[RMDB]
RNA sequence: GGGAACGACUCGAGUAGAGUCGAAAAAGAUAUCUGUCUUAAAGCAAGAGUAUUGUAACUAUGUCCAGUGCAAUAUAAAAAGCUCAGUUUUCGUAGAUUACACCUUAUUCUUUUAAAACGUGACAGCCUCGGUAUGAAGUUUCGACUUCAUACCGAGAAAAGAAACAACAACAACAAC
Reactivity to 2A3 in 0.01 (KOAc 150mM, MgCl2 10mM, bicine 150mM(pH8.5), 24C), signal-to-noise 1, nucleotides 027 to 126: a080g070a040u090a040u080c040u020g060u000c020u050u120a110a030a030g070c040a030a040g000a050g020u020a010u040u050g000u010a070a140c010u020a030u110g100u010c070c060a030g020u000g000c030a050a020u090a010u100a280a130a060a020a000g000c010u000c060a070g030u030u050u010u040c030g000u040a020g000a160u000u100a050c040a060c010c000u020u000a060u110u040c020u030u050u000u090a050a140a010a070c040g070u040g010a010c020a000g030c000
Reactivity to DMS in 0.01 (KOAc 150mM, MgCl2 10mM, bicine 150mM(pH8.5), 24C), signal-to-noise 1, nucleotides 027 to 126: a080g040a070u010a100u010c000u010g060u000c010u000u000a050a110a060g000c160a040a090g010a220g010u000a010u000u000g010u010a080a060c050u000a050u000g000u000c240c090a050g000u000g030c010a010a010u000a070u000a010a060a100a170a060g000c010u010c010a070g010u000u000u000u010c110g020u010a030g000a150u000u000a070c160a090c180c080u000u000a050u000u000c010u000u030u000u000a030a040a110a050c080g010u000g000a040c040a020g010c300

Description:
The data come from the RNA Mapping Database (RMDB), library OK2TST. An RNA of 177 nucleotides, treated with 2A3 and DMS and read out base by base. For DMS, 760 sequencing reads were counted. DMS adducts were read by reverse transcription with MarathonRT.